Structure probing data (DMS) for a 177-nucleotide construct. Reactivities are rounded to 0.1 and cut off at 0 and 3. Conditions: 150 mM KOAc, 10 mM MgCl2 and 150 mM bicine (pH 8.5), 24 C. It was measured as part of the RMDB library OK2TRN.

[RMDB]
RNA sequence: GGGAACGACUCGAGUAGAGUCGAAAAGAAAAAGGUAUGUGAGGAUAAUCCACUUUAAUUCCACACAUGCAAUUCAUCCUGGAGCGUACUAUACAUAUUGAAGUGCAUAAACCUCAAGCCCAUUGUGUAACACCAAGGGGUUCGCCCCUUGGUGUUAAAAAGAAACAACAACAACAAC
Reactivity to DMS in 0.01 (KOAc 150mM, MgCl2 10mM, bicine 150mM(pH8.5), 24C), signal-to-noise 2, nucleotides 027 to 126: g000a020a070a070a110a050g010g010u010a020u010g020u000g000a100g040g000a060u000a040a050u000c090c080a070c060u000u000u000a090a150u000u000c010c010a180c000a000c010a010u000g000c010a040a100u010u010c020a120u000c050c020u000g030g000a090g010c070g000u000a030c100u000a030u040a090c070a000u000a060u010u000g010a040a040g010u000g000c130a040u010a070a070a150c100c050u000c040a060a080g000c020c000c020a160u000u010g020u010g000